[RMDB]
RNA sequence: GGGAACGACUCGAGUAGAGUCGAAAAGAGUCCUAUUUCGAUAGGACUCAACUAAAAUCAGCGGUAAAUAAUUAGCUGGCCUUACCGCUGAACGCCAGCAUACUAGCCUCGUCUUCGGACGAGGCAACGUAACUUAAGUAUUCGUACUUAAGUUACGAAAAGAAACAACAACAACAAC
Reactivity to DMS in 0.01 (KOAc 150mM, MgCl2 10mM, bicine 150mM(pH8.5), 24C), signal-to-noise 9, nucleotides 027 to 126: g000a010g010u000c000c000u000a000u000u000u010c160g020a020u000a010g000g000a010c000u000c000a030a100c090u000a050a060a120a140u000c010a010g000c010g000g000u000a020a040a140u010a090a080u000u010a110g010c010u000g000g000c120c190u000u000a020c010c010g000c000u000g000a010a060c190g010c010c000a010g020c030a190u010a100c200u000a110g010c000c000u000c000g010u000c000u000u000c190g010g010a010c010g000a010g020g010c010a010a010
Reactivity to 2A3 in 0.01 (KOAc 150mM, MgCl2 10mM, bicine 150mM(pH8.5), 24C), signal-to-noise 9, nucleotides 027 to 126: g000a000g000u000c000c000u000a010u010u080u060c210g080a010u010a010g000g040a000c000u000c000a010a000c000u080a030a010a030a150u030c010a000g010c010g050g030u060a040a100a140u190a100a290u230u120a080g000c010u010g010g000c000c010u020u020a020c010c000g000c010u010g000a020a010c020g010c000c000a010g010c010a040u100a210c070u140a080g000c000c010u000c000g010u000c010u010u060c230g070g000a000c000g000a000g000g000c000a000a000